[RMDB]
RNA sequence: GGGAACGACUCGAGUAGAGUCGAAAAUUGCAGCUCCAAGCGCUAUCAAGAAACGGCGUGGUAUUCAACUACGUGCGUCAAUGCGCAGUUUGAUAAGCGUCGAUGCUACGGGCAAUCGCUUAUCCGAAGUGUAGAAGGUGUUCGCACCUUCUACACUAAAAGAAACAACAACAACAAC
Reactivity to 2A3 in 0.01 (KOAc 150mM, MgCl2 10mM, bicine 150mM(pH8.5), 24C), signal-to-noise 5, nucleotides 027 to 126: u160u100g030c040a010g040c000u010c030c010a090a050g000c000g000c010u050a040u160c090a120a050g060a120a070a000c000g020g010c010g000u000g000g010u070a180u170u220c070a080a020c010u020a000c010g060u090g300c010g020u030c050a030a070u140g000c000g000c010a060g070u020u110u090g000a010u000a000a000g000c000g030u050c050g080a030u000g010c010u030a130c230g140g070g000c010a000a010u010c000g000c000u030u010a000u010c010c070g140a110
Reactivity to DMS in 0.01 (KOAc 150mM, MgCl2 10mM, bicine 150mM(pH8.5), 24C), signal-to-noise 4, nucleotides 027 to 126: u000u030g010c150a070g000c040u000c050c010a130a090g010c030g010c000u010a130u020c220a120a100g000a070a110a040c010g010g000c000g020u000g010g010u000a070u060u020c300a120a060c000u000a000c020g000u000g000c000g010u010c070a080a110u010g000c050g000c040a150g000u010u010u020g010a000u000a010a030g010c000g000u010c070g000a130u000g000c010u010a110c170g060g000g020c000a010a060u000c040g000c000u010u000a000u000c010c190g000a140